[RMDB]
RNA sequence: GGGAACGACUCGAGUAGAGUCGAAAACGGCAAAAAAGCAAACUUGACCACCAAGGAUGAAAGAGAUCUUAUCCAAGGAUGCAAAAGAUAAUCUCACUUUUGACACCCACUGAUCUCGAACUUAAAGAAAACCGAGACUACUUCGGUAGUCUCGGAAGAUAAAGAAAAUCUUCGGAUUUUCUUUAUCAAAAGAAACAACAACAACAAC
Reactivity to 2A3 in 0.01 (KOAc 150mM, MgCl2 10mM, bicine 150mM(pH8.5), 24C), signal-to-noise 3, nucleotides 027 to 156: c010g060g010c040a000a020a020a080a060a030g130c080a120a160a060c040u050u050g040a130c020c020a040c040c000a070a010g090g010a080u120g070a090a110a090g020a010g000a010u000c020u050u100a070u050c080c040a040a030g020g020a040u070g000c010a010a020a010a000g020a050u080a200a210u150c060u020c110a030c000u060u000u010u000g070a050c010a010c020c000c000a060c100u050g000a000u020c000u000c010g010a040a030c040u150u170a120a030a030g060a030a060a020a010c000c000g000a010g000a000c000u000a000c000u030u040c150g090g000u000a000g000u000c000u000c000g000g000a000a000
Reactivity to DMS in 0.01 (KOAc 150mM, MgCl2 10mM, bicine 150mM(pH8.5), 24C), signal-to-noise 1, nucleotides 027 to 156: c110g050g000c070a000a020a090a060a150a080g060c000a110a040a100c080u000u000g020a210c070c000a090c090c010a050a120g020g010a230u000g020a040a090a160g000a030g000a050u000c010u020u000a180u010c180c070a100a210g060g000a040u020g000c020a030a000a060a010g000a050u000a150a110u010c080u010c080a290c000u000u000u020u000g020a170c040a020c020c020c000a100c160u020g020a020u000c000u000c000g000a080a130c090u000u000a080a040a130g000a170a060a080a160c050c000g000a030g020a010c000u000a000c010u020u010c220g010g030u000a010g040u010c000u000c000g010g010a000a010
Chemical mapping of a 207-nucleotide RNA with 2A3 and DMS. The DMS profile rests on 1,583 reads. The RNA was probed in 150 mM KOAc, 10 mM MgCl2 and 150 mM bicine (pH 8.5) at 24 C. For 2A3 the reverse transcriptase was SuperScript II with manganese. It was measured as part of the RMDB library M2RFPK. For DMS the reverse transcriptase was MarathonRT. The 2A3 profile rests on 2,072 reads.